The record gives the reactivity of an RNA of 207 nucleotides to 2A3 and DMS. The DMS profile rests on 7,607 reads.
RNA sequence: GGGAACGACUCGAGUAGAGUCGAAAAGGGUACUUGUUUCAGCUGGUCUGGACUCAGGGACCCCUGCCCAAAGCUGAGAUCAGGAGCUGCCUUGUGAGGUCACCUUUCCCAGCUUCUCCCCAUUCGCCAGCAGUCUGAUGGGAUUCAGAACUGACUACUAAAUUACGGUAUUCGUACCGUAAUUUAGAAAAGAAACAACAACAACAAC
Reactivity to 2A3 in 0.01 (KOAc 150mM, MgCl2 10mM, bicine 150mM(pH8.5), 24C), signal-to-noise 7, nucleotides 027 to 156: g010g010g010u010a020c010u020u010g030u010u020u020c010a010g010c030u220g020g130u170c020u020g020g020a020c040u010c060a010g000g010g030a070c010c000c000c000u040g030c010c000c020a020a030a000g000c000u010g010a010g000a060u100c080a060g020g010a040g070c110u080g030c080c020u150u140g160u160g210a050g020g010u070c100a070c010c000u010u030u020c020c000c000a000g010c000u030u020c040u010c000c010c000c000a070u140u120c060g050c050c010a020g010c010a010g030u000c010u010g020a040u070g100g150g040a090u080u040c010a000g030a080a080c010u030g060a120c020u040a020
Reactivity to DMS in 0.01 (KOAc 150mM, MgCl2 10mM, bicine 150mM(pH8.5), 24C), signal-to-noise 2, nucleotides 027 to 156: g010g000g000u000a040c020u010u000g010u000u000u000c000a070g010c040u000g060g040u000c020u000g010g000a050c080u010c010a100g000g010g010a070c000c000c000c000u010g070c010c010c030a110a070a060g030c020u000g010a050g000a070u010c080a020g010g010a160g010c030u000g000c020c020u000u010g030u000g020a090g000g000u000c060a110c020c010u000u000u000c010c020c000a070g000c010u000u010c020u000c000c010c010c020a260u000u000c100g000c040c000a030g010c000a140g010u000c020u000g000a050u000g030g020g000a190u020u000c020a020g010a040a090c020u030g000a040c030u010a300
DMS adducts were read by reverse transcription with MarathonRT.